[RMDB]
RNA sequence: GGGAACGACUCGAGUAGAGUCGAAAAUAAUCACCAGAGCUGUGGCCGCAGACAAUGGGCUGACGGCCGGCACUGACAACCUUAUGCCAUUCAAUAUUGUGAUUCCAACCAGCGAGAUAACCCAGCCCCCCAAAGAUCGGUUCGCCGAUCUUUGGGGAAAAGAAACAACAACAACAAC
Reactivity to 2A3 in 0.01 (KOAc 150mM, MgCl2 10mM, bicine 150mM(pH8.5), 24C), signal-to-noise 2, nucleotides 027 to 126: u040a020a000u080c110a010c090c000a000g000a010g010c000u140g060u300g160g000c000c000g120c040a000g010a080c000a180a300u220g000g300g040c010u040g040a050c010g000g000c040c000g000g000c000a000c000u010g000a020c030a090a180c020c040u220u080a070u040g040c000c000a050u040u000c060a070a020u180a120u110u160g040u040g080a090u080u110c010c000a050a010c000c000a000g140c060g050a050g050a140u130a070a070c000c010c010a000g100c030c020
An RNA of 177 nucleotides, treated with 2A3 and read out base by base.
Source: RMDB library OK1LIB, as collected in RNAgym.
Conditions: 150 mM KOAc, 10 mM MgCl2 and 150 mM bicine (pH 8.5), 24 C.